RNA sequence: GGGAACGACUCGAGUAGAGUCGAAAAUUGACUGAACCUGUCUUCUAACAGUAGUUAAUUGCCAGUAUUUCAAACAAGAUUUGAAAUACGAGUUUCCCAGAAUAAUUUAUUUGGACAGGAUAGGAAGGCCUAAUGUAGUGUUCGCACUACAUUAGGCAAAAGAAACAACAACAACAAC
Reactivity to DMS in 0.01 (KOAc 150mM, MgCl2 10mM, bicine 150mM(pH8.5), 24C), signal-to-noise 4, nucleotides 027 to 126: u000u000g000a000c010u020g000a090a070c040c000u000g020u000c030u010u020c110u000a090a090c170a100g010u020a020g030u000u010a010a030u000u000g000c050c100a280g020u010a000u010u000u000c000a000a010a020c010a200a130g010a300u010u000u000g000a000a010a010u000a000c000g000a260g000u000u000u000c020c000c000a160g010a080a040u050a070a070u030u020u020a100u030u030u010g000g000a010c030a000g000g010a190u030a120g030g000a120a050g010
Reactivity to 2A3 in 0.01 (KOAc 150mM, MgCl2 10mM, bicine 150mM(pH8.5), 24C), signal-to-noise 5, nucleotides 027 to 126: u010u000g010a000c010u020g010a010a080c020c000u000g010u020c000u170u070c040u120a150a030c040a060g100u120a000g010u020u030a020a000u020u030g020c020c010a000g000u000a000u000u000u010c010a010a010a020c060a180a090g180a300u010u010u010g000a000a020a020u020a000c000g000a000g000u000u010u000c000c000c010a000g090a030a080u260a030a060u070u160u230a130u050u140u070g000g000a010c000a000g000g030a010u130a060g150g010a050a040g100